[RMDB]
Source: RMDB library M2RFPK, as collected in RNAgym. This 207-nucleotide RNA was probed chemically with 2A3 and DMS. For DMS, 7,212 sequencing reads were counted. The RNA was probed in 150 mM KOAc, 10 mM MgCl2 and 150 mM bicine (pH 8.5) at 24 C.

RNA sequence: GGGAACGACUCGAGUAGAGUCGAAAAGGAGGAUUCCGCUCCUUUGCGCUUUUUUUUCGGAUUAGGCGUGGAGGCGAAAGUCACCCUCCCCGCAUCGCAAGUUCGUGCUUGCGACUUACACGUAGGGAAAAACCCAUUGACUUCGGUCAAUGGGUAACUCAAUAAGGUUCUUCGGAACCUUAUUGAGAAAAGAAACAACAACAACAAC
Reactivity to 2A3 in 0.01 (KOAc 150mM, MgCl2 10mM, bicine 150mM(pH8.5), 24C), signal-to-noise 4, nucleotides 027 to 156: g050g020a010g040g020a070u100u040c060c020g030c120u050c020c040u000u000u030g000c010g000c010u020u020u020u020u010u030u060u150c190g120g010a040u070u060a050g020g010c020g000u020g010g010a000g000g000c040g090a160a070a020g100u090c030a060c020c010c000u020c010c000c000c010g010c020a020u010c010g000c010a000a010g010u190u290c170g170u300g090c010u000u000g000c000g010a010c010u070u090a040c140a030c180g110u120a130g010g040g000a020a100a030a050a010c020c000c000a010u000u000g000a010c000u020u100c270g090g000u000c000a000a000u040g010g000g000u000a000a000
Reactivity to DMS in 0.01 (KOAc 150mM, MgCl2 10mM, bicine 150mM(pH8.5), 24C), signal-to-noise 2, nucleotides 027 to 156: g000g010a070g030g010a180u000u010c050c010g020c000u000c000c020u000u000u000g020c010g000c010u000u000u000u000u000u000u000u000c280g000g000a080u010u000a030g010g000c010g050u010g010g000a040g000g000c040g000a050a060a030g010u000c040a110c030c000c010u000c000c000c010c030g000c130a050u000c010g000c010a020a000g000u000u000c250g030u000g040c010u000u000g010c010g010a000c040u000u000a100c120a080c060g020u000a060g000g000g010a050a040a050a090a080c000c000c000a020u000u010g020a020c010u000u010c300g040g000u010c000a000a010u010g010g010g020u000a000a030